[RMDB]
RNA sequence: GGGAACGACUCGAGUAGAGUCGAAAAGGCGUGCGCGGCGGAGCUUGGCGCGCGCGCGGCGGAGGUUACCGCGGCCUUGGACGCCGUCCAGGUGCACGCGGCGUCAAUAGCCGCUGACGCAGACGCGUGCGUGGCUCGCGCCGUCCGCGUGGCGCGGCAUUUAAGACCUGUUCGCAGGUCUUAAAUGAAAAGAAACAACAACAACAAC
Reactivity to 2A3 in 0.01 (KOAc 150mM, MgCl2 10mM, bicine 150mM(pH8.5), 24C), signal-to-noise 1, nucleotides 027 to 156: g130g030c000g010u000g000c000g000c000g000g000c000g010g000a020g010c000u030u050g050g060c000g000c000g000c000g000c000g000c000g020g000c030g040g160a190g160g000u050u100a050c030c090g000c010g000g000c020c000u050u050g110g000a030c000g020c030c060g030u040c030c010a110g020g130u140g040c060a040c160g000c000g010g000c000g010u030c000a010a100u030a040g030c000c030g000c050u030g010a010c050g080c090a030g030a140c010g000c010g000u000g000c000g000u030g020g100c010u010c000g000c010g000c050c000g010u130c000c000g010c000g000u030g020g000c010g010c000g000g020
Description: This 207-nucleotide RNA was probed chemically with 2A3. Conditions: 150 mM KOAc, 10 mM MgCl2 and 150 mM bicine (pH 8.5), 24 C.